[RMDB]
RNA sequence: GGGAACGACUCGAGUAGAGUCGAAAAAGGGUGCCGCCGUGCGGAGCUAUAGAGCCAGGGCUGUCGGGUGGGGGCACGCCACCUGUGACAGCUUCGUCCGAGCAAGUGGUUCCUGGUGCGAAGCUGGUCUAGGGAGCGCCUUCGGGCGCUUCCUAGGAAAAGAAACAACAACAACAAC
Reactivity to 2A3 in 0.01 (KOAc 150mM, MgCl2 10mM, bicine 150mM(pH8.5), 24C), signal-to-noise 1, nucleotides 027 to 126: a000g100g020g010u020g000c000c000g100c020c000g000u030g050c000g000g000a020g020c020u020a020u020a000g090a000g000c010c000a020g010g000g010c000u000g030u040c000g000g000g000u000g000g000g020g000g070c020a000c000g030c000c000a030c000c010u040g020u040g020a020c000a020g020c010u000u060c000g010u000c010c000g010a010g030c030a050a050g040u020g040g000u020u050c000c000u060g020g020u090g020c000g000a010a000g000c000u010g000g030
Reactivity to DMS in 0.01 (KOAc 150mM, MgCl2 10mM, bicine 150mM(pH8.5), 24C), signal-to-noise 3, nucleotides 027 to 126: a060g000g010g020u000g010c000c040g010c030c010g040u010g000c050g010g000a170g000c030u010a110u030a000g000a000g010c060c050a090g000g000g010c010u000g000u020c010g000g010g000u000g000g010g000g010g000c040a010c020g010c010c010a020c020c010u030g010u020g020a040c030a030g000c000u000u000c010g000u010c040c010g010a130g000c140a130a110g030u030g020g010u000u000c020c020u000g010g010u020g010c010g000a090a080g010c010u000g000g010